RNA sequence: GGGAACGACUCGAGUAGAGUCGAAAAGAUGCACUUCGGUGCAUCAAAAAGCGUACUACAUCCUCGUGAUGACCCGACGAACUACUGGAGUCCCAAAUAGGACUCCAGCGUCGGCAAGCGAGUGAUGUAUCGCAAAAAAGAGUUCUUCGGAACUCAAGGUUAUAUUACGCUUCGGCGUAAUAUAACCAAAAGAAACAACAACAACAAC
Reactivity to 2A3 in 0.01 (KOAc 150mM, MgCl2 10mM, bicine 150mM(pH8.5), 24C), signal-to-noise 2, nucleotides 027 to 156: g010a000u000g010c010a010c020u010u100c300g000g000u000g010c000a000u000c000a000a000a000a000a000g100c120g040u190a180c060u000a010c050a000u000c000c000u010c010g050u010g040a180u160g040a100c040c010c000g010a000c000g030a010a090c060u190a010c030u300g030g000a030g000u030c030c000c010a180a280a040u290a070g000g050a000c000u020c000c000a000g000c010g000u010c020g030g020c000a050a050g010c000g020a000g000u270g000a000u000g000u000a000u070c000g000c000a170a060a000a000a000a000g040a000g020u050u030c010u040u050c260g120g000a000a000c000u030c010a000a020